The record gives the reactivity of an RNA of 177 nucleotides to DMS and 2A3.
The 2A3 profile rests on 23,297 reads.
Reactivities are rounded to 0.1 and cut off at 0 and 3.
Source: RMDB library OK1LIB, as collected in RNAgym.
RNA sequence: GGGAACGACUCGAGUAGAGUCGAAAAAUUGAGCAAGUUUGAGAUUGAGGCGAGGCUAAAACGCAAAAGAAAUCAGCUCCGGAGUCGUCGACUCGAUGACUUCGUCUUGCUGUUCUUAACUACCUCACCAUCCUAUACUGUUCGCAGUAUAGGAUGGAAAAGAAACAACAACAACAAC
Reactivity to DMS in 0.01 (KOAc 150mM, MgCl2 10mM, bicine 150mM(pH8.5), 24C), signal-to-noise 5, nucleotides 027 to 126: a110u010u010g000a040g010c060a060a030g020u010u020u010g010a090g020a090u020u000g010a050g000g010c090g010a050g020g010c080u020a060a040a090a080c160g000c080a110a050a040a050g020a050a050a090u070c020a030g010c020u000c090c010g000g000a000g000u000c000g030u000c000g000a170c180u040c050g010a000u000g000a000c010u000u000c010g000u010c080u010u010g020c010u010g010u000u000c020u010u000a060a110c100u010a120c040c010u000c030a190
Reactivity to 2A3 in 0.01 (KOAc 150mM, MgCl2 10mM, bicine 150mM(pH8.5), 24C), signal-to-noise 9, nucleotides 027 to 126: a010u090u130g010a020g020c080a110a060g060u070u080u130g130a130g020a130u040u080g020a010g020g030c070g030a020g030g050c080u130a090a070a070a030c110g020c060a070a080a030a000g050a010a060a050u210c020a010g000c000u000c000c010g000g000a000g000u000c000g010u010c010g100a250c110u070c240g000a010u010g000a000c000u000u000c000g010u010c070u020u060g000c000u000g000u030u000c010u030u030a060a060c030u050a050c010c000u010c000a020

For DMS, 15,757 sequencing reads were counted.